[RMDB]
RNA sequence: GGGAACGACUCGAGUAGAGUCGAAAAUGCCCCUACACUCCUUGAUCUUGGAGCGCAGCCCCGCAUAUCCAUGCAGCUUGACAACCAGUGUCGCCCAUGAUGACACUCUCGAAAGCGGGACGUGACAGAUGCAUUAGUGGUUCGCCACUAAUGCAUCAAAAGAAACAACAACAACAAC
Reactivity to DMS in 0.01 (KOAc 150mM, MgCl2 10mM, bicine 150mM(pH8.5), 24C), signal-to-noise 1, nucleotides 027 to 126: u000g010c050c000c000c110u000a050c070a060c010u000c010c000u000u000g030a080u000c070u040u000g000g010a020g000c040g030c040a110g010c020c020c020c050g000c070a020u000a190u000c050c050a080u010g010c120a140g020c040u000u020g010a200c170a020a070c120c170a040g010u000g010u010c010g000c060c090c080a120u000g010a000u010g000a100c030a000c010u000c030u000c100g020a040a030a100g020c010g000g000g010a050c100g030u020g020a130c100a100
Reactivity to 2A3 in 0.01 (KOAc 150mM, MgCl2 10mM, bicine 150mM(pH8.5), 24C), signal-to-noise 1, nucleotides 027 to 126: u050g060c000c000c040c000u060a060c020a070c020u060c010c000u140u140g090a110u110c060u060u130g040g010a000g000c050g000c060a050g000c060c000c000c000g000c010a070u040a030u130c010c030a030u040g060c000a020g040c000u090u050g050a070c020a030a020c010c030a030g000u000g000u040c020g020c020c070c000a110u170g020a000u040g000a040c000a010c020u000c020u010c010g070a070a020a020g020c080g000g030g030a020c060g000u040g030a030c000a070
Chemical mapping of a 177-nucleotide RNA with DMS and 2A3. The 2A3 profile rests on 1,064 reads. For DMS, 810 sequencing reads were counted. Source: RMDB library VIROID, as collected in RNAgym. For 2A3 the reverse transcriptase was SuperScript II with manganese. In probing experiments dimethyl sulfate is read out at A N1 and C N3, which are open when not base-paired. Reactivities are given for positions 27 through 126.